An RNA of 177 nucleotides, treated with DMS and 2A3 and read out base by base. The reactions ran in a buffer of 150 mM KOAc, 10 mM MgCl2 and 150 mM bicine (pH 8.5), at 24 C. Source: RMDB library OK2TRN, as collected in RNAgym. For 2A3 the reverse transcriptase was SuperScript II with manganese. Reactivities are given for positions 27 through 126. Reactivities are rounded to 0.1 and cut off at 0 and 3.
[RMDB]
RNA sequence: GGGAACGACUCGAGUAGAGUCGAAAAGCGUACGGCCCUGCGCCAUGGCCGCGCGUACGUACUGAUCAGUGGAUCCGGCGCGCGACUAGCUGUCUAGCAGUACACUAGGCGCGCGCUAUGGCGCCGGGGGUGAAGGAUAAUUCGUUAUCCUUCACCCAAAAGAAACAACAACAACAAC
Reactivity to DMS in 0.01 (KOAc 150mM, MgCl2 10mM, bicine 150mM(pH8.5), 24C), signal-to-noise 5, nucleotides 027 to 126: g000c040g010u010a070c040g010g010c020c010c080u010g010c010g010c000c000a020u000g000g020c000c010g010c030g020c000g020u000a050c140g020u000a090c050u000g010a060u010c050a150g020u000g010g000a080u000c020c180g010g010c020g010c010g030c020g010a040c020u000a040g020c160u000g010u000c050u010a150g000c170a120g010u010a020c030a070c040u000a010g010g010c000g010c000g010c050g000c000u000a000u000g000g010c010g010c000c260g000g010
Reactivity to 2A3 in 0.01 (KOAc 150mM, MgCl2 10mM, bicine 150mM(pH8.5), 24C), signal-to-noise 4, nucleotides 027 to 126: g020c020g030u060a010c030g040g020c000c010c040u050g010c000g010c000c000a000u010g010g010c020c010g020c010g010c010g030u040a040c050g030u020a060c050u090g060a100u090c040a110g230u140g180g080a040u020c030c060g030g000c010g010c000g000c010g010a010c020u030a010g050c130u020g020u060c030u050a110g110c080a050g080u150a010c000a010c030u030a010g040g000c000g000c000g000c010g000c000u000a000u000g000g000c000g010c010c010g080g000